Chemical mapping of a 177-nucleotide RNA with 2A3 and DMS. 2A3 adducts were read by reverse transcription with SuperScript II with manganese. DMS adducts were read by reverse transcription with MarathonRT. Conditions: 150 mM KOAc, 10 mM MgCl2 and 150 mM bicine (pH 8.5), 24 C. For DMS, 3,134 sequencing reads were counted.
[RMDB]
RNA sequence: GGGAACGACUCGAGUAGAGUCGAAAAUGAAUGAUAGCUUCCGACCCCAGGCCAAGCUGAGUAAGAAGGGCCGGGUUAAGAAGGGACAUGCUCAUGUCCAACCCCAGCCCAGUGGCUCUCAGGAGCCCGCUACGAUAAAGUUCGCUUUAUCGUAGCGAAAAGAAACAACAACAACAAC
Reactivity to 2A3 in 0.01 (KOAc 150mM, MgCl2 10mM, bicine 150mM(pH8.5), 24C), signal-to-noise 2, nucleotides 027 to 126: u070g040a040a040u120g110a110u090a110g030c000u050u010c010c030g060a090c000c010c010c020a070g030g000c030c030a040a040g010c030u030g020a040g130u170a160a050g010a080a090g040g000g020c020c000g030g000g010u040u120a080a050g010a040a050g050g000g000a010c000a010u060g080c070u090c210a010u030g010u000c010c000a010a040c030c000c000c000a000g010c020c010c020a020g020u020g010g010c000u000c000u030c060a120g130g060a010g000c010c010
Reactivity to DMS in 0.01 (KOAc 150mM, MgCl2 10mM, bicine 150mM(pH8.5), 24C), signal-to-noise 4, nucleotides 027 to 126: u000g020a100a080u000g000a090u010a150g000c030u010u010c020c010g000a180c220c010c020c040a110g020g030c120c070a050a050g020c020u000g010a130g010u010a100a070g010a180a110g000g010g020c000c060g000g010g010u000u000a060a070g010a120a070g000g000g010a030c020a020u000g010c200u010c150a080u010g000u010c010c010a090a170c100c000c000c020a070g000c000c000c010a090g030u000g010g000c010u000c000u000c170a120g000g000a050g000c010c020